[RMDB]
The record gives the reactivity of an RNA of 177 nucleotides to DMS and 2A3. 2A3 adducts were read by reverse transcription with SuperScript II with manganese. It was measured as part of the RMDB library OK1LIB. For 2A3, 11,887 sequencing reads were counted. The DMS profile rests on 7,524 reads. The RNA was probed in 150 mM KOAc, 10 mM MgCl2 and 150 mM bicine (pH 8.5) at 24 C. For DMS the reverse transcriptase was MarathonRT. Values are in units of 0.01, from 0 to 300, in steps of 10.

RNA sequence: GGGAACGACUCGAGUAGAGUCGAAAAGAGCACGUUGCAGUUUUUCUAGCUUCUUGCCGCCUUUCUUGCUAGUUUUUCUGCUGGACCGUUCUUGGCGGCUUUCUUUCGGUCCUAUUCGUGCUCGAGAGGGACCGGACGCGUUCGCGCGUUUGGUCCCAAAAGAAACAACAACAACAAC
Reactivity to DMS in 0.01 (KOAc 150mM, MgCl2 10mM, bicine 150mM(pH8.5), 24C), signal-to-noise 2, nucleotides 027 to 126: g000a020g000c000a000c010g020u040u040g000c010a000g000u010u000u010u010u010c000u000a020g020c020u020u000c170u010u030g000c000c000g010c000c030u020u020u040c150u030u030g040c020u000a000g010u000u010u000u010u000c010u000g020c020u000g000g010a010c020c010g010u000u000c130u020u020g010g010c060g000g000c010u010u020u020c040u010u000u000c020g010g000u000c000c000u000a110u000u010c020g010u010g030c000u000c010g000a090g000a170
Reactivity to 2A3 in 0.01 (KOAc 150mM, MgCl2 10mM, bicine 150mM(pH8.5), 24C), signal-to-noise 8, nucleotides 027 to 126: g000a000g000c010a000c020g020u070u110g000c010a020g010u000u010u020u050u010c000u010a010g010c020u140u070c030u140u250g020c000c010g040c010c010u120u260u200c120u130u230g010c000u000a010g020u000u020u020u020u020c000u000g020c030u050g000g000a000c000c000g020u070u050c060u060u090g010g000c000g000g000c000u010u080u020c030u010u070u020c010g000g000u000c000c000u010a120u020u120c000g000u000g000c000u000c000g010a020g030a020